Notes:
An RNA of 177 nucleotides, treated with 2A3 and DMS and read out base by base. The 2A3 profile rests on 932 reads. It was measured as part of the RMDB library OK2TRN.

[RMDB]
RNA sequence: GGGAACGACUCGAGUAGAGUCGAAAAACUUUUGAGAAACUGCUCUGGGUGGGGAAAGAUCUGAAGGACUAAUUCUCUGUUACUGGAGAGGGACCCUGAGAAGCUGAGCCAAGAUCAAAUGCCAUAGGAAUAUAUUACUUUUCGAAGUAAUAUAUUCAAAAGAAACAACAACAACAAC
Reactivity to 2A3 in 0.01 (KOAc 150mM, MgCl2 10mM, bicine 150mM(pH8.5), 24C), signal-to-noise 1, nucleotides 027 to 126: a000c040u140u050u100u110g060a030g010a110a090a040c040u060g000c010u010c010u020g070g040g110u070g020g040g010g020a010a260a000g030a030u000c030u070g030a070a030g010g030a000c020u030a000a150u160u000c010u000c000u020g090u090u140a170c160u100g000g030a040g010a000g030g000g010a020c010c000c030u000g000a000g020a010a000g020c050u030g010a020g000c010c010a080a000g030a040u010c030a020a000a130u140g050c030c000a060u060a050g160
Reactivity to DMS in 0.01 (KOAc 150mM, MgCl2 10mM, bicine 150mM(pH8.5), 24C), signal-to-noise 2, nucleotides 027 to 126: a180c070u000u000u000u010g000a150g030a140a090a080c090u010g000c060u000c020u000g020g010g030u000g040g000g010g000a030a070a080g010a090u000c040u010g010a120a080g000g000a060c090u000a050a070u000u000c050u000c010u010g000u000u010a080c200u010g000g010a090g000a090g000g000g020a120c080c050c030u000g000a080g020a070a070g020c080u000g000a070g000c020c050a070a030g000a060u000c030a090a080a070u000g000c050c040a090u010a120g000